[RMDB]
RNA sequence: GGGAACGACUCGAGUAGAGUCGAAAAAUUUGUGAAUUAUAGUACUUUUUACGUAGUUUACAAAUAUACAAAUUUUAUUUCAAAAAAAAUUGAUCAUUUCAUGCGUAAAUUUCUAGCCAAACUUAAAGUCAAAUGUGUAAUUCGUUACACAUUUGACAAAAGAAACAACAACAACAAC
Reactivity to 2A3 in 0.01 (KOAc 150mM, MgCl2 10mM, bicine 150mM(pH8.5), 24C), signal-to-noise 2, nucleotides 027 to 126: a000u000u040u000g010u020g000a010a040u010u010a010u020a160g000u070a040c110u150u280u050u260u050a000c040g000u000a000g000u000u040u030a000c000a000a000a000u040a050u110a120c010a040a070a130u110u170u170u270a170u040u300u150c250a230a000a020a000a040a000a090a060u130u160g000a120u190c040a020u050u100u000c000a010u110g000c020g010u010a100a000a000u040u050u010c050u050a060g100c000c060a080a020a100c080u070u140a190a040a000